[RMDB]
RNA sequence: GGGAACGACUCGAGUAGAGUCGAAAAUAUUAACUCAAAAUCUUAUUUUUGGUAUGCAAAAGGAGGAACUGAAUGUUAGCACAUUGGAGCUCAGCAACCAAACUCCAAUUCUGCUGGAGGCCAAAUCCCAUUGUCUUCAUUUCGAUGAAGACAAUGGAAAAGAAACAACAACAACAAC
Reactivity to 2A3 in 0.01 (KOAc 150mM, MgCl2 10mM, bicine 150mM(pH8.5), 24C), signal-to-noise 2, nucleotides 027 to 126: u090a020u090u140a070a050c030u060c120a080a020a130a210u050c050u120u260a170u110u120u030u030u110g020g020u090a090u180g000c030a010a040a070a090g080g030a030g060g030a060a040c020u050g050a120a040u050g030u040u110a020g010c030a000c010a070u010u110g030g010a020g040c000u030c080a020g050c020a030a090c050c010a100a000a000c000u000c000c020a020a050u110u020c020u090g050c010u050g020g050a060g080g000c020c030a050a040a020u050c040
Reactivity to DMS in 0.01 (KOAc 150mM, MgCl2 10mM, bicine 150mM(pH8.5), 24C), signal-to-noise 2, nucleotides 027 to 126: u000a100u000u000a060a100c050u000c050a090a070a170a090u010c110u000u000a100u020u010u010u000u000g000g000u000a090u010g000c040a060a050a120a120g010g000a100g000g000a080a080c100u010g000a050a070u000g000u000u000a040g010c050a100c130a060u000u000g000g010a050g010c060u010c080a080g020c130a010a070c050c040a110a070a110c020u000c000c020a020a060u000u010c100u000g010c090u000g010g000a050g020g030c030c090a020a050a070u000c140